The record gives the reactivity of an RNA of 177 nucleotides to 2A3 and DMS. For 2A3, 1,622 sequencing reads were counted. The reactions ran in a buffer of 150 mM KOAc, 10 mM MgCl2 and 150 mM bicine (pH 8.5), at 24 C. For 2A3 the reverse transcriptase was SuperScript II with manganese.
[RMDB]
RNA sequence: GGGAACGACUCGAGUAGAGUCGAAAAUCAAAGAGCGUACAGCACACUCAGACUGUACGACAGUCUGACACACUCGUACGCUAGUCCAACGAGAGAGAGAGAGCGUUGGAACAAGUGUGUGAAAAAACAGAUUCCUUUUCUUCGGAAAAGGAAUCUGAAAAGAAACAACAACAACAAC
Reactivity to 2A3 in 0.01 (KOAc 150mM, MgCl2 10mM, bicine 150mM(pH8.5), 24C), signal-to-noise 1, nucleotides 027 to 126: u110c050a060a060a030g160a030g020c000g030u010a000c030a040g020c240a070c000a000c080u000c000a020g000a000c000u050g020u140a190c050g020a010c020a000g000u040c000u010g010a000c010a020c000a010c040u100c070g010u020a000c010g000c000u010a010g030u000c000c020a000a020c010g030a030g020a030g000a000g000a000g010a000g010a150g000c000g010u000u020g010g050a010a060c050a070a070g060u070g010u000g000u050g140a140a070a000a010a020a000
Reactivity to DMS in 0.01 (KOAc 150mM, MgCl2 10mM, bicine 150mM(pH8.5), 24C), signal-to-noise 1, nucleotides 027 to 126: u030c030a050a080a260g000a050g000c010g000u000a010c020a100g030c050a020c090a280c280u000c010a000g000a000c010u000g000u000a160c150g000a100c030a000g000u000c000u050g010a010c150a020c170a080c010u010c120g090u000a030c000g030c030u030a030g010u000c010c000a070a000c090g000a020g000a060g000a170g000a140g000a070g000a130g010c090g000u000u020g000g000a150a020c100a010a080g000u000g000u000g000u000g000a000a210a000a010a070a030